Source: RMDB library OK2TRN, as collected in RNAgym. The record gives the reactivity of an RNA of 177 nucleotides to 2A3 and DMS. The RNA was probed in 150 mM KOAc, 10 mM MgCl2 and 150 mM bicine (pH 8.5) at 24 C. DMS adducts were read by reverse transcription with MarathonRT.
RNA sequence: GGGAACGACUCGAGUAGAGUCGAAAAAGGUGAAGUUUGGCAAGGGAUCAACUUUACCAGGAUGGCCUCAAGGUGAGGGGCUGUUAACAUCCAUGUACUGAAAAAAUGCAUUUUGACCCAGCCAUUGUACCGUACCGAGAUUCGUCUCGGUACGGUAAAAAGAAACAACAACAACAAC
Reactivity to 2A3 in 0.01 (KOAc 150mM, MgCl2 10mM, bicine 150mM(pH8.5), 24C), signal-to-noise 2, nucleotides 027 to 126: a010g010g000u020g010a060a020g010u120u160u100g080g030c160a240a250g300g020g000a100u020c010a020a020c000u000u020u020a010c000c010a000g030g000a020u040g040g010c000c010u000c030a050a050g060g080u060g030a070g000g010g000g000c010u020g130u070u050a040a040c050a020u030c030c000a010u000g010u040a070c050u080g140a100a030a010a000a010a080u070g000c020a010u000u000u060u070g020a030c010c000c000a010g050c040c000a030u090u170g090
Reactivity to DMS in 0.01 (KOAc 150mM, MgCl2 10mM, bicine 150mM(pH8.5), 24C), signal-to-noise 2, nucleotides 027 to 126: a050g000g010u000g010a040a000g000u000u000u020g030g000c060a260a100g000g030g030a130u000c030a040a030c000u000u000u000a010c050c010a180g010g000a040u010g000g010c000c010u000c050a040a180g030g000u020g000a100g010g010g000g010c030u000g000u010u000a050a080c170a060u000c010c060a160u000g030u000a050c070u020g020a000a000a090a090a060a110u000g000c040a000u000u000u020u000g010a120c030c010c010a110g020c050c080a130u010u000g010

Values cover nucleotides 27 to 126.